[RMDB]
RNA sequence: GGGAACGACUCGAGUAGAGUCGAAAAGCCAGGGUGGUGCAGGCUAUAGCUGCCAUCGGCUGACCUAGAGAAGACACAUCAGCUGAUCCUUUGGACCCAUUGACUUGAGACAGAAGUUCUGGGCUUCUCCUCCUGCGGCCUAGCUCUGAGACAAUGAACCAUUAAUGAGGUUCGCCUCAUUAAUGGUAAAAGAAACAACAACAACAAC
Reactivity to DMS in 0.01 (KOAc 150mM, MgCl2 10mM, bicine 150mM(pH8.5), 24C), signal-to-noise 3, nucleotides 027 to 156: g030c040c020a060g020g010g040u000g010g020u000g020c040a070g010g020c100u010a090u000a100g020c020u010g030c020c030a090u000c000g010g010c010u000g000a040c010c030u020a140g010a140g010a110a090g010a170c070a110c110a120u000c020a050g040c050u000g020a090u000c040c020u000u000u000g020g030a070c020c000c010a140u000u010g010a070c040u010u000g010a150g000a160c070a100g010a100a050g010u000u000c070u000g020g030g040c020u000u000c030u010c030c020u000c010c050u010g010c050g000g030c040c020u010a090g010c040u000c040u000g010a160g000a090c060a060a110u000g000a190
Reactivity to 2A3 in 0.01 (KOAc 150mM, MgCl2 10mM, bicine 150mM(pH8.5), 24C), signal-to-noise 6, nucleotides 027 to 156: g050c000c020a020g030g010g030u150g020g060u200g060c060a030g060g020c080u140a080u140a300g050c020u040g010c010c010a020u010c010g000g000c010u010g010a030c010c040u060a050g010a020g050a230a030g070a050c070a010c000a170u030c020a010g000c000u020g030a050u100c010c030u130u130u120g060g040a080c000c010c020a020u030u130g040a070c020u030u050g010a020g030a100c020a040g060a090a020g060u110u050c030u050g040g000g000c010u040u000c020u010c010c000u050c000c020u030g000c060g020g000c000c010u000a020g000c000u010c000u030g040a060g010a030c060a070a110u140g020a050